Chemical mapping of a 177-nucleotide RNA with DMS and 2A3.
For DMS the reverse transcriptase was MarathonRT.
The RNA was probed in 150 mM KOAc, 10 mM MgCl2 and 150 mM bicine (pH 8.5) at 24 C.
Source: RMDB library OK1LIB, as collected in RNAgym.
2A3 adducts were read by reverse transcription with SuperScript II with manganese.
RNA sequence: GGGAACGACUCGAGUAGAGUCGAAAAAUGAGAGUGUCCCUUGGUAAAGGACUUAAUAGGCAAUAGCCUGCUCUUUUGUCAUGAGCGGUAUGUAGUGAUCGUUUGCCUGUACGGUAGCGCCCAUUGCGCCAGUAAGUUUUUUCGAAAACUUACUGGCAAAAGAAACAACAACAACAAC
Reactivity to DMS in 0.01 (KOAc 150mM, MgCl2 10mM, bicine 150mM(pH8.5), 24C), signal-to-noise 5, nucleotides 027 to 126: a050u020g000a020g000a010g010u000g000u000c000c000c010u010u000g000g010u000a120a190a190g000g000a020c000u000u000a000a010u000a000g000g000c010a010a050u000a050g020c000c010u010g000c000u000c000u000u000u020u020g020u010c040a050u010g000a090g010c040g000g000u020a060u020g020u020a090g010u010g000a040u020c040g000u000u010u020g020c020c020u010g020u020a070c090g000g020u000a050g020c090g010c010c010c010a110u010u020g000c300
Reactivity to 2A3 in 0.01 (KOAc 150mM, MgCl2 10mM, bicine 150mM(pH8.5), 24C), signal-to-noise 9, nucleotides 027 to 126: a000u210g000a010g000a000g000u010g000u000c010c000c000u000u010g020g010u020a020a010a020g000g000a000c000u010u000a010a000u010a010g010g000c010a010a130u140a300g000c000c000u000g000c000u000c000u000u010u000u020g010u000c010a010u040g020a040g040c040g030g060u150a070u130g060u070a080g040u030g060a050u030c030g050u020u090u090g030c010c020u120g060u120a040c070g010g030u030a010g030c010g010c010c010c020a060u060u210g040c050